[RMDB]
RNA sequence: GGGAACGACUCGAGUAGAGUCGAAAAGGGGUCCACGCUACGUUACUUGGAUUUAGCUAUGAGGUACAGCUGAAGCCUCCACGGCUGUACUACCCACCAUAGCUUGUCAGUAACGGUCGUGGACGGAGGCACCCAAAGUCAGUCUUCGGACUGACAAGAUAUUGCACGGGUUCGCCCGUGCAAUAUCAAAAGAAACAACAACAACAAC
Reactivity to 2A3 in 0.01 (KOAc 150mM, MgCl2 10mM, bicine 150mM(pH8.5), 24C), signal-to-noise 4, nucleotides 027 to 156: g000g000g000g000u010c010c000a000c000g020c060u270a150c040g020u040u000a010c030u190u300g220g000a050u300u240u160a000g000c000u010a000u000g000a000g030g000u000a000c000a000g000c000u010g010a050a000g000c000c010u010c000c010a010c000g000g000c000u000g010u000a010c000u010a010c020c020c020a060c010c000a010u000a000g010c000u010u020g040u020c150a110g000u010a000a000c010g000g010u050c030g000u000g000g000a000c000g000g000a000g010g000c000a050c010c030c000a060a040a000g000u000c000a000g000u000c000u030u120c240g110g000a010c000u000g000a000c000a000a010
Reactivity to DMS in 0.01 (KOAc 150mM, MgCl2 10mM, bicine 150mM(pH8.5), 24C), signal-to-noise 1, nucleotides 027 to 156: g000g010g000g000u000c000c010a000c030g000c050u000a040c020g020u000u000a010c050u060u010g030g030a060u010u020u000a030g000c000u010a030u000g000a140g000g000u000a010c020a060g000c000u030g000a050a160g060c000c000u030c010c030a300c000g010g010c000u000g000u010a010c010u010a060c030c010c000a300c090c010a050u000a030g030c010u000u010g030u010c030a120g000u010a010a010c000g000g000u010c140g040u010g030g000a020c020g030g000a010g010g000c030a080c010c010c020a070a050a160g000u000c000a000g030u000c000u000u010c270g010g000a030c000u000g040a000c020a030a140
Structure probing data (2A3 and DMS) for a 207-nucleotide construct. For 2A3 the reverse transcriptase was SuperScript II with manganese. For DMS, 2,046 sequencing reads were counted.